[RMDB]
RNA sequence: GGGAACGACUCGAGUAGAGUCGAAAAGCAGUAUCUCGUUAGGCGAGGCUCCUAUACAAACACAGGUUGCUGAUCUGACGACGUCGAGAGAUGCCCAAGAUUAGGACAGGAUAUAUCGAACCAAGGUGAACCUGUCCAGGGUUCGCCCUGGACAGAAGAACCUAGCAAGAUUCGUCUUGCUAGGUUCAAAAGAAACAACAACAACAAC
Reactivity to 2A3 in 0.01 (KOAc 150mM, MgCl2 10mM, bicine 150mM(pH8.5), 24C), signal-to-noise 3, nucleotides 027 to 156: g000c040a020g060u150a150u050c030u010c010g040u050u060a080g050g080c070g030a070g030g010c020u030c010c000u050a060u080a200c090a030a170a010c080a010c020a090g090g010u170u130g020c010u030g020a090u020c020u040g030a020c030g030a050c020g030u010c020g000a020g010a000g010a100u060g020c020c010c000a020a020g020a060u100u120a050g000g040a020c040a040g010g080a010u030a010u010a030u150c110g040a050a020c030c010a100a000g050g000u030g050a040a030c000c000u000g000u010c000c010a000g000g030g000u040u050c110g090c000c020c000u000g000g000a000c000a000g000a000a010
Reactivity to DMS in 0.01 (KOAc 150mM, MgCl2 10mM, bicine 150mM(pH8.5), 24C), signal-to-noise 1, nucleotides 027 to 156: g030c130a090g040u020a060u000c000u000c010g050u000u000a080g020g000c040g020a100g020g030c050u010c000c040u000a090u010a170c040a030a080a080c030a080c090a160g000g000u000u010g020c010u030g010a040u000c010u010g010a140c080g010a000c020g010u000c030g000a210g010a230g000a050u010g010c010c060c030a220a070g000a130u000u000a030g000g000a110c050a150g000g000a120u020a070u010a070u000c070g000a110a090c040c010a040a060g020g040u000g000a120a090c070c000u000g000u000c010c060a050g000g000g000u010u010c300g050c010c000c000u000g010g010a050c020a020g010a070a120
Chemical mapping of a 207-nucleotide RNA with 2A3 and DMS. 2A3 adducts were read by reverse transcription with SuperScript II with manganese.